[RMDB]
RNA sequence: GGGAACGACUCGAGUAGAGUCGAAAAUCGAACCGGAUUAGAUACCCGGGUAGUCCUGGCUGUAAACAAUGCUCGCUAGGUAUGUCACGCGCCAUGAGCACGUGAUGUGCCGUAGGGAAGACGAUAAGAUAUUGCUCCAGUUCGCUGGAGCAAUAUCAAAAGAAACAACAACAACAAC
Reactivity to 2A3 in 0.01 (KOAc 150mM, MgCl2 10mM, bicine 150mM(pH8.5), 24C), signal-to-noise 5, nucleotides 027 to 126: u070c020g010a040a060c000c000g010g000a050u040u070a050g080a140u150a120c020c000c000g000g020g020u050a030g020u010c000c010u020g040g010c020u100g050u240a050a060a090c050a080a090u130g030c010u030c040g100c050u000a010g000g000u020a020u010g010u010c000a000c010g010c000g000c000c030a190u300g050a060g100c000a000c000g000u000g000a010u000g000u010g000c000c010g000u010a010g040g040g020a070a030g040a010c090g020a050u030a160a060
Reactivity to DMS in 0.01 (KOAc 150mM, MgCl2 10mM, bicine 150mM(pH8.5), 24C), signal-to-noise 4, nucleotides 027 to 126: u040c050g000a130a300c020c000g000g000a060u000u020a110g000a170u030a110c130c000c000g010g000g000u030a140g010u010c010c000u010g010g030c060u000g010u010a080a080a080c120a080a070u030g000c050u000c030g000c010u000a150g000g010u000a000u000g020u000c010a000c010g000c090g010c010c020a160u020g000a250g020c000a020c000g010u010g000a010u000g000u000g010c000c000g000u020a050g000g010g020a070a040g000a140c080g020a110u040a050a120